[RMDB]
RNA sequence: GGGAACGACUCGAGUAGAGUCGAAAAUGAAUGAGGAAAAUAAGGAAGAGAGAAGAGGCAAGAUGGUGCCUAGGUUUGUGAUGCCUCUUUCCUGGGUCUCUUGUCUCCACAGGAGGAGCCAUGGGGCUCUACCCAACCUUUUCGAAGGUUGGGUAGAAAAAGAAACAACAACAACAAC
Reactivity to 2A3 in 0.01 (KOAc 150mM, MgCl2 10mM, bicine 150mM(pH8.5), 24C), signal-to-noise 2, nucleotides 027 to 126: u140g030a020a040u070g000a100g060g060a050a090a040a100u200a120a040g060g020a030a020g020a000g000a010g010a090a050g000a000g010g020c010a020a010g040a050u150g050g170u140g010c000c000u010a030g000g030u020u030u050g080u040g040a090u160g060c000c040u060c010u020u010u010c000c000u000g010g000g020u020c000u000c000u010u010g010u010c010u010c020c000a030c030a020g080g100a030g020g010a010g000c000c000a050u090g000g000g080g000c020
Reactivity to DMS in 0.01 (KOAc 150mM, MgCl2 10mM, bicine 150mM(pH8.5), 24C), signal-to-noise 4, nucleotides 027 to 126: u010g010a080a060u010g000a070g010g000a070a040a070a090u010a090a090g010g000a060a050g010a070g000a070g010a110a070g000a030g010g010c020a010a030g010a050u010g020g020u000g010c020c010u000a010g010g010u000u000u000g000u010g010a120u000g000c070c050u000c020u000u000u000c010c010u000g010g000g000u000c020u010c000u000u010g010u000c010u010c020c080a070c120a100g000g010a080g010g000a050g010c040c030a070u000g010g000g000g010c100